[RMDB]
RNA sequence: GGGAACGACUCGAGUAGAGUCGAAAAUAAUUUCAGAACAGAGGUUGAUCCCGACCUAUCUGCUUUCUAUGUUAAGGAUGGUAAAUACUUUACAAGUGAACCACCCGUAACAUAUUCACCAGCUACAUACCGAAUUCGUUCGCGAAUUCGAAAAGAAACAACAACAACAAC
Reactivity to 2A3 in 0.01 (KOAc 150mM, MgCl2 10mM, bicine 150mM(pH8.5), 24C), signal-to-noise 9, nucleotides 027 to 129: u150a020a120u070u150u160c070a020g020a080a030c020a010g040a010g060g000u000u000g010a140u010c000c000c000g000a000c000c000u020a080u010c010u010g010c020u060u140u030c060u050a010u020g000u000u000a030a050g000g000a020u010g000g020u030a090a150a070u110a090c020u080u090u100a100c110a150a020g000u010g040a060a020c000c000a000c000c000c010g010u010a010a000c010a000u020a050u070u130c060a080c070c030a030g080c040u100a050c050a120u140a100c060
Reactivity to DMS in 0.01 (KOAc 150mM, MgCl2 10mM, bicine 150mM(pH8.5), 24C), signal-to-noise 9, nucleotides 027 to 129: u070a060a040u030u030u040c090a070g030a060a080c080a020g020a080g030g000u000u000g020a180u020c010c010c000g000a050c040c020u000a030u040c020u030g010c190u030u040u020c120u020a030u000g020u020u000a050a030g030g010a060u000g050g000u000a060a070a070u000a000c010u010u010u030a130c250a040a030g000u000g040a170a040c020c010a020c020c000c000g000u030a010a000c030a000u020a020u020u030c080a070c120c040a050g000c120u010a070c130a070u070a090c130